[RMDB]
RNA sequence: GGGAACGACUCGAGUAGAGUCGAAAAAAAGUUUUUCCAGAGGAGAUAGCAGUAAUGAGUGUCCUUUUACUGUCAUGGUGUGACACUACUGCCUCAACCGUUGGUCGAAAAUGGGGCAAGUAUACCACGAUAUGGCGUAGUUCGCUACGCCAUAUCGAAAAGAAACAACAACAACAAC
Reactivity to DMS in 0.01 (KOAc 150mM, MgCl2 10mM, bicine 150mM(pH8.5), 24C), signal-to-noise 2, nucleotides 027 to 126: a100a030a080g030u010u010u000u010u000c000c030a120g000a090g020g000a130g020a070u000a140g000c020a040g000u030a080a140u020g010a150g030u010g010u000c020c050u000u010u010u020a030c060u020g000u000c250a070u010g010g010u000g030u010g010a030c050a030c050u010a040c020u000g000c020c050u010c060a110a070c060c040g000u000u000g010g000u010c100g000a050a040a050a040u000g000g000g010g000c120a040a060g020u000a080u000a060c070c030a160
Reactivity to 2A3 in 0.01 (KOAc 150mM, MgCl2 10mM, bicine 150mM(pH8.5), 24C), signal-to-noise 1, nucleotides 027 to 126: a000a020a000g050u080u030u000u070u000c000c000a000g030a020g070g000a050g010a080u050a070g020c010a010g010u110a160a000u180g050a000g050u070g000u090c000c050u020u170u240u030a040c040u010g070u100c050a080u160g040g000u000g040u040g000a010c010a000c010u040a040c000u000g000c000c000u040c000a030a040c000c000g200u110u240g070g030u020c060g020a020a060a030a090u070g000g000g010g020c000a040a040g000u010a050u060a080c000c040a040